[RMDB]
RNA sequence: GGGAACGACUCGAGUAGAGUCGAAAACGCGAACAGUGGGACGACGGCAACAACACGUUGGCGUUGGCGCCCGGUGUCGUUGUCGCCUACGAGCGCAACGUACAGACCAACGCCCGCCUGCAGGACGCACAUUAUUGUCAUUCGUGACAAUAAUGUGAAAAGAAACAACAACAACAAC
Reactivity to 2A3 in 0.01 (KOAc 150mM, MgCl2 10mM, bicine 150mM(pH8.5), 24C), signal-to-noise 9, nucleotides 027 to 126: c060g010c020g030a070a020c020a070g050u080g010g020g030a020c040g010a010c020g060g030c030a050a020c010a020a030c030a070c140g030u030u050g030g000c010g010u010u030g030g010c030g060c020c020c000g010g010u040g020u030c010g000u010u020g160u190c070g000c010c030u200a170c130g060a070g050c000g000c000a000a000c010g060u090a010c000a040g070a060c000c010a010a010c010g010c010c010c010g020c010c010u030g000c030a030g040g060a020c040g000
Reactivity to DMS in 0.01 (KOAc 150mM, MgCl2 10mM, bicine 150mM(pH8.5), 24C), signal-to-noise 9, nucleotides 027 to 126: c090g010c030g000a050a070c060a080g030u010g000g010g010a100c150g010a090c060g010g000c030a060a050c050a070a080c110a060c140g010u010u000g010g000c010g010u000u000g000g000c060g010c050c030c070g010g010u000g010u000c000g000u000u000g010u020c030g020c000c010u010a100c280g000a150g010c010g000c010a010a010c010g010u010a030c030a070g000a120c020c010a050a050c020g000c000c010c130g010c030c030u000g000c050a070g010g010a110c150g000

An RNA of 177 nucleotides, treated with 2A3 and DMS and read out base by base. The reactions ran in a buffer of 150 mM KOAc, 10 mM MgCl2 and 150 mM bicine (pH 8.5), at 24 C. For 2A3 the reverse transcriptase was SuperScript II with manganese. It was measured as part of the RMDB library OK2TST. For DMS, 38,899 sequencing reads were counted.